An RNA of 177 nucleotides, treated with 2A3 and DMS and read out base by base.
The RNA was probed in 150 mM KOAc, 10 mM MgCl2 and 150 mM bicine (pH 8.5) at 24 C.
Source: RMDB library RFM100, as collected in RNAgym.
Reactivities are rounded to 0.1 and cut off at 0 and 3.
DMS adducts were read by reverse transcription with MarathonRT.

RNA sequence: GGGAACGACUCGAGUAGAGUCGAAAAUUGAAGUUAGUUUGGUAUUCGUUGGAUCAGCUUCACAAGGAGUGUAUUCUGAUGAUAAGCAAGUCAACAUCAAUCUAUGAGUGUCGGAGAAGGGUUUUGAAUAGACUUGUAGAUUCGUCUACAAGUCUAUAAAAGAAACAACAACAACAAC
Reactivity to 2A3 in 0.01 (KOAc 150mM, MgCl2 10mM, bicine 150mM(pH8.5), 24C), signal-to-noise 8, nucleotides 027 to 126: u020u020g010a050a010g030u020u050a030g030u020u040u050g160g050u090a100u050u080c010g010u010u020g030g000a030u030c030a030g050c020u030u010c030a060c060a240a150g050g010a030g020u040g010u100a090u110u010c000u010g040a030u020g010a020u030a070a040g070c020a020a010g060u110c010a010a020c000a030u020c010a000a030u000c020u100a090u130g050a040g060u060g040u060c040g030g030a080g020a100a070g090g000g000u010u020u010u020g020a010
Reactivity to DMS in 0.01 (KOAc 150mM, MgCl2 10mM, bicine 150mM(pH8.5), 24C), signal-to-noise 7, nucleotides 027 to 126: u010u000g000a030a090g010u010u000a070g010u000u010u000g010g020u010a090u010u000c040g020u020u000g000g010a040u010c170a140g010c030u000u000c020a110c240a110a160g010g010a020g000u010g010u030a060u020u000c020u000g010a020u010g000a030u010a130a160g000c040a040a040g010u010c040a030a040c040a060u010c040a030a040u010c080u010a070u020g010a120g020u010g000u000c020g000g010a070g000a070a070g000g010g000u010u000u000u000g000a070